RNA sequence: GGGAACGACUCGAGUAGAGUCGAAAAGCUCUAGGAGACUAGAGCAAUACGUACGAGCGAUCGUGUCACUGAACUUAGAUAGCCAGUUCAGAGGCUGUCAAAGGACAUAGCUAUAGCUAUGUCCAAAGACCAUUGAUAGGUUCGCCUAUCAAUGGUCAAAAGAAACAACAACAACAAC
Reactivity to 2A3 in 0.01 (KOAc 150mM, MgCl2 10mM, bicine 150mM(pH8.5), 24C), signal-to-noise 4, nucleotides 027 to 126: g000c000u020c000u010a000g010g030a070g030a050c000u000a000g000a000g000c000a000a020u050a020c030g070u020a030c030g040a010g080c030g040a040u070c040g010u040g050u080c010a010c040u040g080a090a020c030u020u020a030g010a040u040a020g060c030c010a030g000u030u100c030a050g050a030g090g000c000u020g010u020c030a080a070a060g000g000a000c000a000u000a000g000c010u120a060u100a300g000c000u000a010u000g000u000c000c000a000a000a020
Reactivity to DMS in 0.01 (KOAc 150mM, MgCl2 10mM, bicine 150mM(pH8.5), 24C), signal-to-noise 4, nucleotides 027 to 126: g000c010u000c000u010a010g000g020a290g010a250c000u020a000g000a010g000c010a030a030u030a070c160g000u020a030c030g010a060g000c170g000a120u000c060g040u010g020u000c010a170c030u010g000a040a050c030u010u010a090g000a090u010a050g000c130c090a050g000u010u010c060a030g000a050g010g020c010u000g000u010c010a120a110a120g000g010a000c000a000u000a000g020c010u020a120u030a100g000c000u000a000u000g010u000c000c010a000a030a040